[RMDB]
RNA sequence: GGGAACGACUCGAGUAGAGUCGAAAAGAUUGGUUGAGCCUAGGAAGUUCAGGCUGCAGUGAGCUGUGAUCACACUAUUACACUCCAGCUUGGGUGACAGAACUGUCUCUUUAAAAAAGUCCUGAGCAUGUGUUGGAUUUAACAUGGGUGAGAGACCACCUACUCCUAGGUUCGCCUAGGAGUAGGUAAAAGAAACAACAACAACAAC
Reactivity to DMS in 0.01 (KOAc 150mM, MgCl2 10mM, bicine 150mM(pH8.5), 24C), signal-to-noise 1, nucleotides 027 to 156: g010a160u000u000g010g040u010u000g000a100g000c030c000u000a190g030g010a090a140g040u010u000c020a080g010g060c050u010g030c050a100g010u000g020a050g010c040u000g060u010g000a070u000c070a090c090a130c110u000a130u000u020a160c030a050c030u020c010c010a010g000c030u000u000g050g010g020u000g030a180c030a060g010a050a080c050u010g010u000c050u020c050u000u000u000a030a070a040a060a040a030g000u010c030c010u020g000a220g000c010a000u020g020u000g010u030u000g000g000a170u000u000u000a060a030c060a100u010g020g020g000u000g010a200g000a080g020a040c020c050
Reactivity to 2A3 in 0.01 (KOAc 150mM, MgCl2 10mM, bicine 150mM(pH8.5), 24C), signal-to-noise 2, nucleotides 027 to 156: g040a020u140u100g030g050u100u080g020a000g000c000c010u050a110g030g030a110a030g030u050u070c000a070g070g000c030u030g050c030a000g060u030g120a070g010c150u000g090u050g160a090u090c040a020c000a000c180u030a060u100u140a020c010a000c010u010c010c010a000g000c000u040u040g000g040g010u030g030a020c010a050g110a090a070c020u040g020u060c010u000c010u040u140u090a150a170a020a020a000a000g110u050c030c030u050g020a020g040c040a030u070g000u020g040u070u040g040g050a170u090u010u060a040a010c080a080u080g090g000g010u000g010a050g040a000g000a000c030c010